[RMDB]
RNA sequence: GGGAACGACUCGAGUAGAGUCGAAAAUUCACGUUCGCGUGAAGGCAGCUCCUAAGUCCUCACUACAUGCCAACUAGAGCCUUGGACCAUUCGGAAACGAAUGCUAGGCUCAUUGGCAUUAGUGAGGAUAUGGAUACGAUGCAGAUUCGUCUGCAAAAUCCAUUGUACCAUUCGUGGUACAAUGGAUAAAAGAAACAACAACAACAAC
Reactivity to 2A3 in 0.01 (KOAc 150mM, MgCl2 10mM, bicine 150mM(pH8.5), 24C), signal-to-noise 6, nucleotides 027 to 156: u010u000c000a010c020g030u060u080c300g020c010g090u020g010a010a020g080g040c070a060g020c070u020c020c010u020a110a050g030u000c000c000u010c000a000c000u010a020c020a070u000g000c000c000a030a020c150u220a110g000a010g010c000c020u140u160g090g070a190c110c000a000u000u010c000g040g030a120a080a060c020g010a000a000u010g010c010u020a000g000g000c000u000c000a000u000u000g000g000c000a000u000u000a000g000u000g010a000g000g000a000u010a000u010g000g000a020u040a100c150g060a070u090g010c000a000g010a040u050u100c130g120u020c110u000g000c000a060a070a060
Reactivity to DMS in 0.01 (KOAc 150mM, MgCl2 10mM, bicine 150mM(pH8.5), 24C), signal-to-noise 2, nucleotides 027 to 156: u000u000c010a000c000g040u000u010c230g000c040g060u010g020a020a030g030g050c070a150g010c050u010c000c040u000a090a280g020u000c000c000u000c020a030c000u000a010c160a030u000g050c000c000a040a020c070u010a130g020a030g010c020c000u000u000g060g020a150c270c010a020u010u000c000g050g020a160a100a260c020g000a000a000u000g010c020u000a010g020g030c000u000c000a040u000u000g010g000c010a000u000u000a010g020u000g000a020g000g050a010u000a020u000g010g000a110u020a040c050g010a210u000g020c000a040g000a070u000u010c250g040u010c000u000g060c000a020a040a120